Overview
The record gives the reactivity of an RNA of 177 nucleotides to 2A3 and DMS. Conditions: 150 mM KOAc, 10 mM MgCl2 and 150 mM bicine (pH 8.5), 24 C. For DMS the reverse transcriptase was MarathonRT. For 2A3 the reverse transcriptase was SuperScript II with manganese. For 2A3, 1,221 sequencing reads were counted.
RNA sequence: GGGAACGACUCGAGUAGAGUCGAAAAGAUAUGGACAGAACCUCCUUGGACCCUACCCACCAGCUUCGGAAACGAAGCUGAGGGCUAGGAGAUUCUGUCCUAAGUCAAAGCUAUCUUCGGAUAGCAACUAAGUGUCACACUUCGGUGUGACACUUAGAAAAGAAACAACAACAACAAC
Reactivity to 2A3 in 0.01 (KOAc 150mM, MgCl2 10mM, bicine 150mM(pH8.5), 24C), signal-to-noise 1, nucleotides 027 to 126: g010a020u100a040u130g010g010a010c000a030g010a010a010c010c000u060c030c000u050u160g300g200a300c070c010c020u050a110c040c060c060a080c060c010a020g020c000u000u050c000g000g050a070a110a000c010g020a000a000g000c040u000g000a000g010g020g000c020u080a010g000g000a000g000a000u010u020c000u000g020u000c000c000u010a010a000g000u020c030a020a070a070g000c000u020a000u030c000u050u080c080g130g010a000u040a000g000c000a020a000
Reactivity to DMS in 0.01 (KOAc 150mM, MgCl2 10mM, bicine 150mM(pH8.5), 24C), signal-to-noise 1, nucleotides 027 to 126: g020a050u000a300u020g000g000a010c000a020g000a010a010c020c000u000c000c000u000u010g040g000a140c030c020c000u020a080c100c110c040a030c300c000a000g010c000u010u000c010g020g000a130a110a280c050g000a020a000g010c000u000g010a010g000g000g010c060u000a010g000g020a000g050a000u000u000c010u000g000u000c000c000u000a020a130g020u000c050a120a080a130g000c000u000a000u000c000u020u020c160g020g000a000u000a000g010c000a090a110